Annotation:
Chemical mapping of a 177-nucleotide RNA with 2A3 and DMS. The RNA was probed in 150 mM KOAc, 10 mM MgCl2 and 150 mM bicine (pH 8.5) at 24 C. For 2A3 the reverse transcriptase was SuperScript II with manganese. Reactivities are given for positions 27 through 126. DMS adducts were read by reverse transcription with MarathonRT.
[RMDB]
RNA sequence: GGGAACGACUCGAGUAGAGUCGAAAAUAUCUACUAGCUUGGCAUCUUGAGCGUAUCUUACUCAAGUGCUAGUAGUUCCAUUACUAUUUAAUGAUAGUAAUGAUGCCUCUUAAUAUAAGAGAUACAACGUAGAGCUAUCGUUCGCGAUAGCUCUACGAAAAGAAACAACAACAACAAC
Reactivity to 2A3 in 0.01 (KOAc 150mM, MgCl2 10mM, bicine 150mM(pH8.5), 24C), signal-to-noise 1, nucleotides 027 to 126: u060a010u000c000u000a000c000u000a000g060c000u010u160g000g010c030a000u010c000u000u000g000a000g030c020g000u000a000u070c040u030u130a060c000u000c000a000a000g000u020g000c000u020a000g000u000a000g000u000u010c010c000a000u000u000a000c000u010a020u020u050u050a230a010u220g010a000u000a000g000u000a000a000u000g000a000u080g020c000c000u100c060u020u170a180a050u080a010u000a060a040g000a000g000a000u010a000c000a030a020
Reactivity to DMS in 0.01 (KOAc 150mM, MgCl2 10mM, bicine 150mM(pH8.5), 24C), signal-to-noise 2, nucleotides 027 to 126: u010a080u020c000u000a010c000u010a030g050c030u040u000g000g020c090a030u030c010u000u010g010a030g000c170g000u010a010u020c040u000u010a300c000u010c000a000a000g010u000g000c000u000a040g000u000a000g000u000u020c080c020a020u000u000a000c000u000a000u000u030u000a070a090u050g000a000u020a000g000u000a020a010u010g020a100u000g010c030c000u010c090u020u010a100a110u000a140u030a050a050g000a000g010a070u000a000c090a100a280